[RMDB]
The record gives the reactivity of an RNA of 177 nucleotides to DMS and 2A3. 2A3 adducts were read by reverse transcription with SuperScript II with manganese. Conditions: 150 mM KOAc, 10 mM MgCl2 and 150 mM bicine (pH 8.5), 24 C. Source: RMDB library RFMREP, as collected in RNAgym. For DMS the reverse transcriptase was MarathonRT.
RNA sequence: GGGAACGACUCGAGUAGAGUCGAAAAGGAUUGCGGAUUGAAACUCAUCCGCAUGAAGCUGGAUUCGGUAGUAAUCGCGCCUCAGAAGGGCGCGGUGAAUACGUCCCUGCUCCUUGCACACACCGCCGAACUAGUUUUUGUUCGCAAAAACUAGUUCAAAAGAAACAACAACAACAAC
Reactivity to DMS in 0.01 (KOAc 150mM, MgCl2 10mM, bicine 150mM(pH8.5), 24C), signal-to-noise 3, nucleotides 027 to 126: g000g000a140u010u000g020c000g000g010a030u000u000g020a180a170a130c270u010c090a060u010c010c000g010c000a000u010g000a090a070g000c030u000g000g000a110u010u000c080g000g020u020a060g000u010a170a000u000c010g010c010g030c010c010u010c050a160g040a210a280g000g020g000c010g010c000g010g010u000g030a140a180u000a080c010g000u000c120c000c000u000g000c000u020c010c010u010u000g030c120a070c080a080c120a130c050c040g020c140c160
Reactivity to 2A3 in 0.01 (KOAc 150mM, MgCl2 10mM, bicine 150mM(pH8.5), 24C), signal-to-noise 2, nucleotides 027 to 126: g030g030a070u030u020g000c000g010g000a030u070u160g120a300a130a090c100u050c070a020u000c000c010g000c030a000u010g020a020a020g010c030u050g040g020a170u090u030c050g050g010u030a000g010u010a010a010u010c000g000c000g000c000c000u050c030a160g060a220a080g050g020g000c000g000c010g010g000u000g000a010a010u070a050c000g010u010c000c000c000u010g000c000u020c000c000u020u050g000c070a070c000a000c010a050c030c030g020c030c050